RNA sequence: GGGAACGACUCGAGUAGAGUCGAAAAGAUAUGGAUCCUUCAGGGUUACAGUCCGAAGAACUCGGAAACGAGGGAGGACACCCUGAGAGGAUCCUAAGUCAAAGGACCUCAGUUCGCUGAGGUCCAAGACUAAGUCACUGUUCGCAGUGACUUAGUCAAAAGAAACAACAACAACAAC
Reactivity to 2A3 in 0.01 (KOAc 150mM, MgCl2 10mM, bicine 150mM(pH8.5), 24C), signal-to-noise 2, nucleotides 027 to 126: g020a000u090a060u200g010g000a010u000c000c000u000u040c000a020g050g020g040u060u100a230c120a090g000u010c000c020g170a300a040g020a050a020c000u030c000g010g000a050a060a020c020g000a010g000g000g040a040g000g010a000c010a030c000c010c000u020g020a020g010a020g000g000a000u000c000c000u000a020a000g020u000c080a060a070a170g010g000a010c000c000u010c010a020g010u070u130c230g000c110u000g000a000g000g000u000c030c000a010a000
Reactivity to DMS in 0.01 (KOAc 150mM, MgCl2 10mM, bicine 150mM(pH8.5), 24C), signal-to-noise 3, nucleotides 027 to 126: g030a090u010a300u010g030g000a000u000c000c000u010u000c010a000g000g010g000u000u020a160c270a120g010u010c000c000g010a140a170g000a120a170c000u000c000g010g010a120a090a160c000g000a040g000g000g000a030g020g020a020c000a070c010c000c000u000g000a050g020a010g010g010a020u000c000c000u000a000a030g000u000c020a080a150a220g000g000a020c000c000u000c000a000g000u000u020c250g040c000u000g000a000g000g010u000c000c000a000a010